RNA sequence: GGGAACGACUCGAGUAGAGUCGAAAAAACACCUUUAAUUUUUCCUGGUGACGUGAUUUCACUUGUGCCUCAAAAUAAAGUGAAACAAACUAAAGCGGUUAAAUCACCAGUAAGAAAAGCAAGCCAAGGUAAUGAAGGUGUUCGCACCUUCAUUACCAAAAGAAACAACAACAACAAC
Reactivity to 2A3 in 0.01 (KOAc 150mM, MgCl2 10mM, bicine 150mM(pH8.5), 24C), signal-to-noise 4, nucleotides 027 to 126: a010a000c150a080c040c000u120u180u110a170a110u070u030u010u010u010c000c000u000g000g000u020g010a080c030g090u050g040a220u000u010u000c010a000c020u040u020g080u170g130c040c100u260c060a090a100a040a070u130a080a110a000g000u010g000a000a000a020c030a080a060a020c080u160a090a180a110g090c080g040g110u120u160a040a120a050u020c000a010c000c010a010g010u040a050a000g030a000a040a000a010g110c120a050a040g020c010c040a170a060
Reactivity to DMS in 0.01 (KOAc 150mM, MgCl2 10mM, bicine 150mM(pH8.5), 24C), signal-to-noise 1, nucleotides 027 to 126: a150a000c130a060c050c000u030u000u030a080a080u000u010u010u000u000c060c010u000g010g000u000g030a000c200g000u000g010a080u000u030u000c020a010c000u020u000g000u000g080c030c050u050c300a000a040a040a140u030a030a040a000g140u000g000a000a020a000c090a120a060a090c100u000a030a010a050g030c250g000g000u020u000a000a100a180u000c000a000c000c040a000g000u000a030a100g000a030a000a020a130g040c100a060a020g050c140c130a040a060

The data come from the RNA Mapping Database (RMDB), library OK1LIB. The record gives the reactivity of an RNA of 177 nucleotides to 2A3 and DMS. In probing experiments dimethyl sulfate is read out at A N1 and C N3, which are open when not base-paired. Conditions: 150 mM KOAc, 10 mM MgCl2 and 150 mM bicine (pH 8.5), 24 C. The DMS profile rests on 1,355 reads.